[RMDB]
RNA sequence: GGGAACGACUCGAGUAGAGUCGAAAAGAUAUGGAGUUGAACUACAGCGAGACGACGUUGAAAUCGGAAACGAUGGAGUCGUUAAGCUGCAACUCCUAAGUCAAACACCUUCCUUCGGGAAGGUGAAUCUCACGUAAGUGUUCGCACUUACGUGAGAAAAAGAAACAACAACAACAAC
Reactivity to DMS in 0.01 (KOAc 150mM, MgCl2 10mM, bicine 150mM(pH8.5), 24C), signal-to-noise 3, nucleotides 027 to 126: g000a020u020a300u000g000g020a000g020u010u010g030a060a050c060u040a300c000a000g000c000g020a300g000a040c000g020a010c010g030u020u020g000a090a170a000u000c010g000g010a100a050a100c000g020a020u000g040g010a090g000u000c000g010u000u000a020a300g000c000u000g010c000a010a010c000u000c000c000u020a020a080g000u020c030a140a070a190c000a000c000c000u000u000c000c020u010u020c190g020g010g010a010a000g000g010u010g000a040a040
Reactivity to 2A3 in 0.01 (KOAc 150mM, MgCl2 10mM, bicine 150mM(pH8.5), 24C), signal-to-noise 2, nucleotides 027 to 126: g020a010u070a040u170g030g010a020g000u010u000g040a120a070c100u270a080c300a010g010c010g020a040g020a030c010g010a000c030g160u280u060g090a040a080a000u010c020g010g030a050a040a040c000g000a010u010g080g030a020g000u000c000g020u020u010a030a000g010c000u010g000c000a000a010c010u000c000c000u020a070a000g040u010c040a120a070a040c000a010c000c000u000u000c010c000u050u050c300g100g000g000a000a000g010g000u010g000a000a000